[RMDB]
RNA sequence: GGGAACGACUCGAGUAGAGUCGAAAAAGGAUAACCAUUAUAUCCAGUCUCCAACAUUGCAUCUGCAAGUUCAGGAAUACUUGUAUCUUCACUAAUUGUCUGAACGUUUGUAGACAUAUAAUAACCUCGUAGGCUAGUCGUUCGCGACUAGCCUACGAAAAGAAACAACAACAACAAC
Reactivity to 2A3 in 0.01 (KOAc 150mM, MgCl2 10mM, bicine 150mM(pH8.5), 24C), signal-to-noise 2, nucleotides 027 to 126: a000g050g020a070u080a170a090c120c080a130u250u060a030u000a050u100c000c030a040g090u010c090u000c000c000a060a010c040a020u090u240g000c000a150u000c030u040g040c010a000a030g000u000u000c000a000g000g030a020a250u090a300c150u020u280g020u120a040u000c030u080u210c100a000c160u060a140a040u050u010g100u130c000u000g040a000a000c000g030u000u030u020g000u020a060g020a000c000a000u050a010u000a110a220u220a080a030c000c050u040
Chemical mapping of a 177-nucleotide RNA with 2A3. Values are in units of 0.01, from 0 to 300, in steps of 10. Values cover nucleotides 27 to 126. It was measured as part of the RMDB library OK1LIB. The reactions ran in a buffer of 150 mM KOAc, 10 mM MgCl2 and 150 mM bicine (pH 8.5), at 24 C.